[RMDB]
RNA sequence: GGGAACGACUCGAGUAGAGUCGAAAAACACGAUACCUUGGAACAAGACAAAUCUGUUUCUCAACGUUGGGCUUGAUAUUACCAAAACAGGUAUUAAUCUUGUUGCUAUGCCCCCGUUCAAGAGCAAAUCCGUACUAGAGUUCGCUCUAGUACGGAUAAAAGAAACAACAACAACAAC
Reactivity to 2A3 in 0.01 (KOAc 150mM, MgCl2 10mM, bicine 150mM(pH8.5), 24C), signal-to-noise 2, nucleotides 027 to 126: a000c030a000c050g090a110u120a100c020c030u030u010g050g030a040a040c020a120a000g060a030c000a020a120a040u040c020u010g050u010u090u020c100u010c040a050a020c050g090u120u090g080g010g020c030u030u030g020a000u040a100u200u130a060c000c020a000a060a090a060c040a030g000g060u040a100u140u110a110a060u020c030u030u030g030u050u050g020c030u030a080u140g010c010c000c010c010c010g010u050u070c120a130a010g040a000g020c030a000a240
Reactivity to DMS in 0.01 (KOAc 150mM, MgCl2 10mM, bicine 150mM(pH8.5), 24C), signal-to-noise 4, nucleotides 027 to 126: a110c090a090c140g010a130u000a070c070c040u010u000g000g010a090a080c040a020a020g010a070c100a040a080a050u020c030u010g010u000u000u010c110u000c090a060a070c110g010u000u010g020g010g000c070u000u000g020a050u010a070u000u000a090c140c090a060a020a060a050c110a020g010g010u000a050u020u000a080a210u000c020u000u000g000u010u000g000c050u000a050u010g010c060c000c000c090c030g010u010u000c090a040a080g000a080g010c110a060a090